[RMDB]
RNA sequence: GGGAACGACUCGAGUAGAGUCGAAAAUGCAAACAAUAACAAUUCUUACGCUGUAGCUGCCUAAACACCAGCAUAGCGUGAUCCGUCUGACUUCACCCAAGGGUUAGAUCCGGGUCUCAAAUUAAUUGGGUUACGUUAAAUGCCGCCGUUUGAAGUGCUAUUACCUCCUCUUCGGAGGAGGUAAUAGAAAAGAAACAACAACAACAAC
Reactivity to 2A3 in 0.01 (KOAc 150mM, MgCl2 10mM, bicine 150mM(pH8.5), 24C), signal-to-noise 3, nucleotides 027 to 156: u090g020c030a100a080a090c060a060a160u210a130a040c070a040a100u270u040c060u100u110a030c000g000c000u010g010u050a100g020c000u000g000c000c000u040a040a020a010c010a010c020c000a010g000c000a020u030a000g010c010g000u000g010a000u000c000c010g000u000c010u000g000a010c000u020u020c050a010c020c000c010a000a020g000g000g010u000u020a000g000a050u070c200c080g000g010g030u010c030u010c070a080a120a130u230u270a060a140u050u020g000g010g010u010u090a040c040g010u030u140a060a110a040u080g040c020c040g010c000c020g010u020u030u110g090a080a000g030u030g060
Reactivity to DMS in 0.01 (KOAc 150mM, MgCl2 10mM, bicine 150mM(pH8.5), 24C), signal-to-noise 1, nucleotides 027 to 156: u010g020c050a070a060a100c080a040a050u010a040a140c100a110a130u000u020c000u000u000a060c020g050c000u000g010u000a190g070c010u010g000c000c160u000a140a090a080c130a090c300c010a030g000c020a180u010a060g010c010g030u010g010a020u010c030c000g040u020c000u000g020a000c010u000u010c000a110c050c000c020a230a170g000g020g030u010u000a010g010a020u000c090c110g040g060g050u000c010u010c070a040a080a090u010u010a030a090u010u010g030g020g030u000u020a040c050g010u000u000a040a060a210u000g020c050c040g020c000c020g000u000u010u010g020a070a000g050u000g020